[RMDB]
RNA sequence: GGGAACGACUCGAGUAGAGUCGAAAAGCAUAUGGCCAAGAAGCGCCAGAGUUGCUCGUGCAGCCAACUCUCGAGUCUGACGUCAGAUACCGCAUCGCCAAAGCGGACCUGCAAAAACUCACCACCGACGUCAAGAAGAGGCUGCAAGCAGGUGCAGCCACAUUUCAUCGUUCGCGAUGAAAUGUGGAAAAGAAACAACAACAACAAC
Reactivity to DMS in 0.01 (KOAc 150mM, MgCl2 10mM, bicine 150mM(pH8.5), 24C), signal-to-noise 1, nucleotides 027 to 156: g000c050a070u030a140u000g000g020c030c030a110a090g010a000a190g050c150g020c010c000a080g000a230g000u000u010g000c030u000c000g030u000g000c100a020g030c060c020a060a090c070u000c000u000c050g020a170g020u000c050u000g070a020c050g000u010c020a060g000a090u000a090c020c030g000c040a130u020c040g040c050c090a050a150a080g000c030g000g020a110c050c010u000g000c080a020a080a060a100a050c070u000c060a060c000c030a080c050c040g000a030c020g030u020c010a040a050g020a140a080g010a260g000g030c020u000g020c020a040a050g040c190a080g010g040u000g000c040a200g000
Reactivity to 2A3 in 0.01 (KOAc 150mM, MgCl2 10mM, bicine 150mM(pH8.5), 24C), signal-to-noise 3, nucleotides 027 to 156: g000c000a000u040a050u030g020g000c020c020a100a120g210a200a040g090c160g000c100c010a000g020a040g120u140u050g020c020u040c050g070u070g000c010a010g000c010c010a070a120c040u020c000u040c090g050a030g080u010c020u010g000a000c020g010u010c020a050g040a120u120a200c000c010g000c030a090u130c100g090c100c050a100a070a020g000c010g000g000a050c010c000u020g010c020a000a010a020a090a110c080u100c070a050c030c000a070c010c080g010a000c000g020u000c020a010a020g030a020a010g050a040g010g000c000u000g000c010a010a020g000c000a000g020g000u030g000c040a010g010
The record gives the reactivity of an RNA of 207 nucleotides to DMS and 2A3. For 2A3, 2,295 sequencing reads were counted. Conditions: 150 mM KOAc, 10 mM MgCl2 and 150 mM bicine (pH 8.5), 24 C. The data come from the RNA Mapping Database (RMDB), library OK3TST.